[RMDB]
RNA sequence: GGGAACGACUCGAGUAGAGUCGAAAAGUCCCUAACUACUAUACAGCGAAACCACUGCAAGGGGAACGGGCCUUGCAAAAACAGCGGGGAAAGAAGACCCUGUUGAGCUUGACUCUAGUCUGAUAUUGCAUAGUGACCUAAAAGGUGUAGAAUAGGUUCAUAACUGCGUGUUCGCACGCAGUUAUGAAAAAGAAACAACAACAACAAC
Reactivity to 2A3 in 0.01 (KOAc 150mM, MgCl2 10mM, bicine 150mM(pH8.5), 24C), signal-to-noise 2, nucleotides 027 to 156: g060u030c000c010c000u020a120a050c040u040a000c020u010a020u030a170c090a030g030c020g070a080a090a040c040c000a070c070u050g020c040a040a030g090g000g010g020a040a020c040g030g060g000c010c000u000u000g000c010a000a000a100a020a000c000a000g000c040g010g010g010g000a090a210a070g270a070a040g080a140c000c010c000u010g000u000u000g010a020g000c000u060u060g010a060c000u020c050u090a090g040u060c010u030g050a050u030a120u100u000g000c000a000u020a140g010u040g080a060c020c000u060a070a080a050a030g030g020u060g020u000a020g030a070a080u080a090g070g000u000

Record summary:
An RNA of 207 nucleotides, treated with 2A3 and read out base by base. Reactivities are given for positions 27 through 156. The 2A3 profile rests on 1,167 reads.